This 177-nucleotide RNA was probed chemically with DMS. Source: RMDB library TTRINS, as collected in RNAgym. Conditions: 150 mM KOAc, 10 mM MgCl2 and 150 mM bicine (pH 8.5), 24 C.
RNA sequence: GGGAACGACUCGAGUAGAGUCGAAAAGAUAUGGAAAGCAGACAUGAGCCUACCAGGGAAGCACUUUCCCAUCGGAAACGAUGGGAAAGUGCGCCUGGACGGGCUCAACAGCUGCUUUCCUAAGUCAGAACCUUCUAAAGUUCGCUUUAGAAGGUUCAAAAGAAACAACAACAACAAC
Reactivity to DMS in 0.01 (KOAc 150mM, MgCl2 10mM, bicine 150mM(pH8.5), 24C), signal-to-noise 1, nucleotides 027 to 126: g000a030u010a300u010g000g000a020a000a010g000c000a000g020a040c130a220u010g000a020g020c010c010u000a180c020c000a010g010g000g000a080a230g000c000a000c010u000u010u000c000c000c010a000u000c010g000g010a120a070a200c020g030a010u030g000g000g000a000a000a010g020u000g020c000g000c020c000u030g000g030a030c220g010g000g010c000u010c000a000a000c270a230g020c000u000g000c000u000u000u000c000c000u000a000a050g010u010c030a170